RNA sequence: GGGAACGACUCGAGUAGAGUCGAAAAGGGGUCUGGAUCGUAGUUACAUGAGUAAUGUGUUGUCAGCUCUGAAGCCUCCACGGAGCUUGGAUUUACACAUGAAAUUGUAGGUUCGAAGAUCCAGACGGAGGCACCCAACCGAGUGUUCGCACUCGAAAUGUUUGCUGUCAUUCGUGACAGCAAACAUAAAAGAAACAACAACAACAAC
Reactivity to 2A3 in 0.01 (KOAc 150mM, MgCl2 10mM, bicine 150mM(pH8.5), 24C), signal-to-noise 1, nucleotides 027 to 156: g070g000g030g030u000c000u000g010g000a000u000c000g040u080a040g090u170u110a030c000a030u050g000a000g060u030a090a000u030g010u000g080u170u230g000u070c030a000g000c000u000c000u020g030a120a000g040c000c040u020c010c020a050c020g010g030a030g000c000u080u220g080g010a050u100u160u300a020c010a000c000a010u050g010a040a000a070u030u040g000u030a080g010g270u200u080c030g040a160a000g000a050u000c000c000a050g010a000c000g000g030a000g020g000c010a110c120c010c000a010a040c040c000g000a010g000u020g090u040u180c270g120c090a010c000u010c010g010a060a100